[RMDB]
RNA sequence: GGGAACGACUCGAGUAGAGUCGAAAAGAUAUGGAGUUUAGAGCUUUUGACGCUCGACUAUCGGAAACGAUAGAAGAGCGAUAAGCUCUGACUCCUAAGUCAAAAGCUCCUCGUUCGCGAGGAGCAAUCAUACUGUGUCCUUCGGGACACAGUAUGAAAAAGAAACAACAACAACAAC
Reactivity to 2A3 in 0.01 (KOAc 150mM, MgCl2 10mM, bicine 150mM(pH8.5), 24C), signal-to-noise 2, nucleotides 027 to 126: g000a000u050a050u110g020g000a020g040u090u250u300a030g160a000g000c000u140u200u260u300g300a270c190g030c000u020c020g020a020c010u000a000u010c010g010g000a050a050a000c000g000a000u010a020g040a020a010g010a000g000c020g080a070u030a140a000g030c000u000c000u020g000a000c000u000c010c000u010a080a000g020u010c020a090a050a110a070g000c000u000c010c000u000c000g020u030u090c300g000c010g090a000g030g000a000g000c000a010a000
Reactivity to DMS in 0.01 (KOAc 150mM, MgCl2 10mM, bicine 150mM(pH8.5), 24C), signal-to-noise 2, nucleotides 027 to 126: g010a030u010a240u010g000g020a040g000u000u000u000a030g030a020g000c000u000u000u000u010g010a240c130g020c000u000c010g000a300c030u000a000u000c000g020g000a060a050a060c010g020a030u000a000g000a060a300g000a000g020c000g020a030u000a000a020g010c000u000c000u000g010a000c000u010c000c000u000a000a060g000u010c030a140a120a170a170g000c000u000c000c000u000c000g020u000u000c260g010c000g030a010g000g000a010g030c000a000a010
An RNA of 177 nucleotides, treated with 2A3 and DMS and read out base by base. For DMS the reverse transcriptase was MarathonRT. Conditions: 150 mM KOAc, 10 mM MgCl2 and 150 mM bicine (pH 8.5), 24 C. The 2A3 profile rests on 2,489 reads.